This 177-nucleotide RNA was probed chemically with 2A3 and DMS.
Source: RMDB library RFMREP, as collected in RNAgym.
RNA sequence: GGGAACGACUCGAGUAGAGUCGAAAAGAGGCUUCGGCGAAAAUUUGUGCACAAAUGGAAAGCAGCUUGUCAAGGGUUGAGAGCGUUAGGCUCUAAACGCUUGAUUACAUCCACACUUCGGUGUGGAACAUUCUCUAGUCUUCGGACUAGAGAAUGUAAAAGAAACAACAACAACAAC
Reactivity to 2A3 in 0.01 (KOAc 150mM, MgCl2 10mM, bicine 150mM(pH8.5), 24C), signal-to-noise 2, nucleotides 027 to 126: g040a020g020g000c040u040u040c100g090g000c050g040a040a080a030a070u140u140u120g050u100g010c050a020c040a160a110a070u120g040g020a090a050a020g020c020a010g020c030u040u140g040u010c000a000a000g140g000g010u020u040g020a010g000a000g020c020g060u190u250a180g170g000c000u000c000u030a020a010a010c060g000c070u010u000g000a000u000u040a010c020a030u000c010c000a010c000a000c000u050u080c180g060g000u010g000u000g020g000a000
Reactivity to DMS in 0.01 (KOAc 150mM, MgCl2 10mM, bicine 150mM(pH8.5), 24C), signal-to-noise 3, nucleotides 027 to 126: g000a120g010g020c020u000u000c090g010g020c040g000a040a080a100a090u000u000u020g020u000g000c090a070c060a030a050a070u010g010g010a070a070a100g010c040a040g010c070u010u000g010u000c010a020a010g000g010g010u000u000g010a030g000a010g010c000g020u010u010a110g020g010c000u000c000u000a020a000a000c000g000c000u000u000g000a030u000u000a050c170a210u000c010c000a000c000a010c000u000u010c150g010g000u000g000u000g000g000a020

DMS adducts were read by reverse transcription with MarathonRT.